[RMDB]
RNA sequence: GGGAACGACUCGAGUAGAGUCGAAAAUCAUUAACAGAUGUCCACACAGGACACAGGAAGUGCACGGUUUUGAUUAUCAGUGUAUGCCAAAAUAAACCAAUUCCUGUAUGUGGAGGACAGACAGCUGCGAUAAUGUUUCGUUCGCGAAACAUUAUCGAAAAGAAACAACAACAACAAC
Reactivity to 2A3 in 0.01 (KOAc 150mM, MgCl2 10mM, bicine 150mM(pH8.5), 24C), signal-to-noise 5, nucleotides 027 to 126: u060c010a010u110u160a120a060c020a070g110a120u030g000u000c000c000a010c010a000c010a020g110g100a060c040a000c000a130g020g020a020a020g220u110g160c060a030c130g030g040u020u000u070u120g170a120u110u190a040u100c070a070g060u040g060u210a060u100g040c020c020a030a060a020a110u140a020a050a030c020c020a020a090u020u010c000c000u000g010u030a080u030g000u000g000g070a180g030g000a000c010a000g080a020c030a010g080c030u110g030
Reactivity to DMS in 0.01 (KOAc 150mM, MgCl2 10mM, bicine 150mM(pH8.5), 24C), signal-to-noise 4, nucleotides 027 to 126: u000c030a090u000u010a100a100c100a090g010a170u020g000u020c000c000a080c010a010c000a030g000g000a110c250a050c010a000g000g010a030a030g020u000g010c160a100c170g000g000u000u010u000u020g000a180u000u000a030u000c090a110g020u010g010u010a030u000g020c110c070a020a050a030a050u000a030a030a120c180c040a040a120u000u000c000c000u000g000u000a050u010g030u000g000g010a120g010g000a020c000a030g020a110c150a100g010c100u000g010

The record gives the reactivity of an RNA of 177 nucleotides to 2A3 and DMS. DMS adducts were read by reverse transcription with MarathonRT. Reactivities are given for positions 27 through 126. For 2A3 the reverse transcriptase was SuperScript II with manganese. Reactivities are rounded to 0.1 and cut off at 0 and 3. The data come from the RNA Mapping Database (RMDB), library OK2TST. The reactions ran in a buffer of 150 mM KOAc, 10 mM MgCl2 and 150 mM bicine (pH 8.5), at 24 C.